[RMDB]
RNA sequence: GGGAACGACUCGAGUAGAGUCGAAAAAAAAAUCACCUCCAGAGGACCCCUUCAGCGAACAGAAGAGACUCCCCUCGAUAGGAGCAAGACCAUAGCGAUGGGGGGAGAUGCUAGGAGUCGGAGGAGACAACCAAGAGGUUCGCCUCUUGGAAAAGAAACAACAACAACAAC
Reactivity to DMS in 0.01 (KOAc 150mM, MgCl2 10mM, bicine 150mM(pH8.5), 24C), signal-to-noise 4, nucleotides 027 to 129: a000a010a010a000a020u000c050a050c060c010u000c020c000a160g030a210g020g000a000c030c030c000c020u030u060c100a040g000c050g020a110a060c020a100g040a070a060g020a140g000a090c020u010c010c010c010c000u000c000g020a120u050a070g000g000a170g010c140a040a040g000a070c100c080a040u050a080g030c020g000a040u050g010g010g000g000g000g000a000g030a060u070g030c050u000a000g000g000a070g040u010c050g020g030a110g000g020a030g050a060c140a050a070
Reactivity to 2A3 in 0.01 (KOAc 150mM, MgCl2 10mM, bicine 150mM(pH8.5), 24C), signal-to-noise 9, nucleotides 027 to 129: a000a000a000a000a000u060c030a060c010c000u000c010c000a040g050a110g270g080a080c010c010c000c000u060u130c080a020g010c010g090a060a050c040a130g220a230a020g070a070g020a060c010u000c020c010c000c000u010c010g070a050u080a120g060g040a050g040c020a040a010g080a060c030c030a090u120a060g040c040g050a070u150g000g000g000g000g010g000a000g000a010u070g010c010u030a030g000g000a010g010u020c020g010g000a000g010g010a010g020a000c030a020a040